[RMDB]
The record gives the reactivity of an RNA of 177 nucleotides to DMS and 2A3.
Reactivities are rounded to 0.1 and cut off at 0 and 3.
For 2A3, 1,490 sequencing reads were counted.
The reactions ran in a buffer of 150 mM KOAc, 10 mM MgCl2 and 150 mM bicine (pH 8.5), at 24 C.
Reactivities are given for positions 27 through 126.
RNA sequence: GGGAACGACUCGAGUAGAGUCGAAAAUAUCCAGAACUAAGCGAUCCAUAUUUGCCUGGAAAAUAUGAGCUCUCAUUACAACCUCCAGACUCCAGUGAGUAGGAAUCACCCUCUCUUCUUGGUGAGCCUGUUAUGGUUUGUUCGCAAACCAUAACAGAAAAGAAACAACAACAACAAC
Reactivity to DMS in 0.01 (KOAc 150mM, MgCl2 10mM, bicine 150mM(pH8.5), 24C), signal-to-noise 2, nucleotides 027 to 126: u010a110u000c010c030a110g000a090a080c140u010a100a140g020c050g000a060u000c020c040a050u000a070u000u000u000g000c060c030u000g010g010a080a050a040a050u000a040u000g000a100g010c070u000c030u000c050a050u000u010a070c110a100a120c060c060u000c010c010a110g000a140c020u000c010c030a100g020u010g010a030g000u010a050g000g010a100a120u010c120a090c050c010c040u000c020u000c040u000u000c060u000u000g020g000u000g010a100g000c080
Reactivity to 2A3 in 0.01 (KOAc 150mM, MgCl2 10mM, bicine 150mM(pH8.5), 24C), signal-to-noise 2, nucleotides 027 to 126: u120a040u000c000c000a010g060a100a070c140u150a180a000g040c020g090a050u060c010c040a060u030a090u070u060u070g060c000c010u000g030g000a010a000a030a050u080a040u050g020a010g030c020u000c000u020c140a050u150u150a070c060a090a050c030c010u000c010c010a020g010a110c000u000c030c000a020g040u000g040a000g030u140a040g060g040a040a090u080c050a140c010c030c000u000c030u000c000u090u020c050u080u030g090g020u030g030a020g050c040